Chemical mapping of a 207-nucleotide RNA with DMS and 2A3. It was measured as part of the RMDB library OK3TST. The RNA was probed in 150 mM KOAc, 10 mM MgCl2 and 150 mM bicine (pH 8.5) at 24 C. For DMS the reverse transcriptase was MarathonRT. Values are in units of 0.01, from 0 to 300, in steps of 10.

RNA sequence: GGGAACGACUCGAGUAGAGUCGAAAAGAAGCAGUCCUUAUUGUGUGUGAUGUUUAGUCAUCGCACUGUUCCUACGGGCUGCCAACGUAGGUCCAAUGUGCCGAGAGGCACUAGAAGUACGGCUUAUUAUGAGGCAUCGCCGUACCAACGAUGCUGACGUGACUCAUUAUUUCGAUAAUGAGUCACGAAAAGAAACAACAACAACAAC
Reactivity to DMS in 0.01 (KOAc 150mM, MgCl2 10mM, bicine 150mM(pH8.5), 24C), signal-to-noise 2, nucleotides 027 to 156: g010a110a080g040c020a050g010u000c010c000u000u000a140u000u000g020u000g050u020g050u020g000a010u020g030u000u020u000a180g020u000c030a020u000c000g000c010a020c020u000g030u000u000c060c010u000a110c200g020g010g000c000u010g000c030c090a030a050c060g000u000a040g020g000u000c000c020a080a140u010g030u000g000c010c000g020a300g000a300g020g010c000a000c010u000a050g030a050a040g020u000a070c040g010g030c070u000u000a090u010u000a110u000g020a250g020g000c020a000u010c040g000c000c000g030u000a100c070c000a060a060c040g000a060u000g000c010u000g000a220
Reactivity to 2A3 in 0.01 (KOAc 150mM, MgCl2 10mM, bicine 150mM(pH8.5), 24C), signal-to-noise 5, nucleotides 027 to 156: g160a020a040g000c010a000g020u010c020c020u130u080a210u210u220g090u050g010u000g010u000g040a020u000g090u050u170u200a240g110u180c000a010u000c000g000c000a000c000u020g040u030u080c000c000u020a030c000g000g000g000c010u020g020c000c010a050a010c050g110u070a020g000g040u000c020c020a050a060u120g000u000g000c000c000g020a030g010a040g040g010c000a000c010u000a030g030a140a010g020u060a020c030g010g000c040u080u030a040u120u080a110u280g140a060g050g010c020a010u030c020g040c040c020g040u040a080c000c010a020a020c030g020a000u040g010c010u040g020a030